An RNA of 177 nucleotides, treated with 2A3 and DMS and read out base by base. 2A3 adducts were read by reverse transcription with SuperScript II with manganese. Reactivities are given for positions 27 through 126.
RNA sequence: GGGAACGACUCGAGUAGAGUCGAAAAUGGGCAAGACCGGUGCCAGCCGCCGCGGUAAUACCGGCAGUCCAAGUGAUGGCCGAUAUUAUUGGGCCUAAAGCGUCCGUAGCUUGCUGUGUAAGUCCAUUUGAUUACGCGAUUUCGAUCGCGUAAUCAAAAAAGAAACAACAACAACAAC
Reactivity to 2A3 in 0.01 (KOAc 150mM, MgCl2 10mM, bicine 150mM(pH8.5), 24C), signal-to-noise 2, nucleotides 027 to 126: u120g080g000g000c030a010a030g040a030c000c020g020g010u020g020c030c010a020g020c010c020g050c000c010g190c010g030g000u010a020a000u010a060c000c000g000g000c000a000g010u020c010c020a150a160g060u140g140a010u020g060g000c000c010g010a000u000a010u030u010a000u020u000g050g000g000c010c000u010a050a020a000g000c000g110u090c000c000g000u020a070g060c020u020u000g000c010u000g030u040g040u150a180a030g030u040c010c000a020u020
Reactivity to DMS in 0.01 (KOAc 150mM, MgCl2 10mM, bicine 150mM(pH8.5), 24C), signal-to-noise 1, nucleotides 027 to 126: u000g000g000g000c000a060a000g010a010c070c000g000g000u000g000c030c060a010g000c300c300g040c010c000g000c000g000g000u000a000a080u000a000c000c030g000g000c000a180g000u010c010c010a270a130g020u020g000a000u000g000g000c000c000g010a100u000a000u000u000a000u000u030g000g010g040c020c000u040a150a190a160g000c000g000u050c000c030g020u010a290g000c030u040u000g020c000u010g040u010g040u010a160a080g000u020c030c000a200u140

For 2A3, 1,229 sequencing reads were counted.
The RNA was probed in 150 mM KOAc, 10 mM MgCl2 and 150 mM bicine (pH 8.5) at 24 C.